[RMDB]
RNA sequence: GGGAACGACUCGAGUAGAGUCGAAAAGUUCGCCCCAUAUUUCUCGUAGCUGCGCCGGUGCCCGUUGCAAUGCUUCCCGGCACCUGACGCGCAUCACGACGGCAUCAGCCGAGCCGCAUGUCCCUGUAGUUACCUUCGAGUUCGCUCGAAGGUAACUAAAAGAAACAACAACAACAAC
Reactivity to DMS in 0.01 (KOAc 150mM, MgCl2 10mM, bicine 150mM(pH8.5), 24C), signal-to-noise 1, nucleotides 027 to 126: g040u010u010c090g000c020c000c000c100a180u000a040u000u010u000c040u000c010g000u010a040g000c030u010g010c090g030c030c080g000g020u000g010c050c010c300g010u070u000g000c060a070a200u020g000c080u000u000c000c040c050g000g000c010a030c030c040u010g010a080c070g000c000g000c010a040u020c060a060c040g030a100c090g000g060c080a060u000c140a080g000c020c020g040a050g000c020c010g010c090a070u000g010u000c000c010c010u050g010u040
Reactivity to 2A3 in 0.01 (KOAc 150mM, MgCl2 10mM, bicine 150mM(pH8.5), 24C), signal-to-noise 2, nucleotides 027 to 126: g080u100u080c050g060c000c000c040c000a030u080a120u140u140u030c050u020c020g060u050a030g040c030u030g000c020g000c010c020g010g010u000g020c000c000c010g020u040u010g040c080a100a160u200g000c000u030u000c000c060c000g000g000c010a000c000c000u010g030a040c020g000c010g010c030a000u030c020a010c000g090a030c010g000g050c020a100u040c040a110g030c010c010g020a020g020c000c020g030c040a020u030g030u070c000c000c020u040g050u050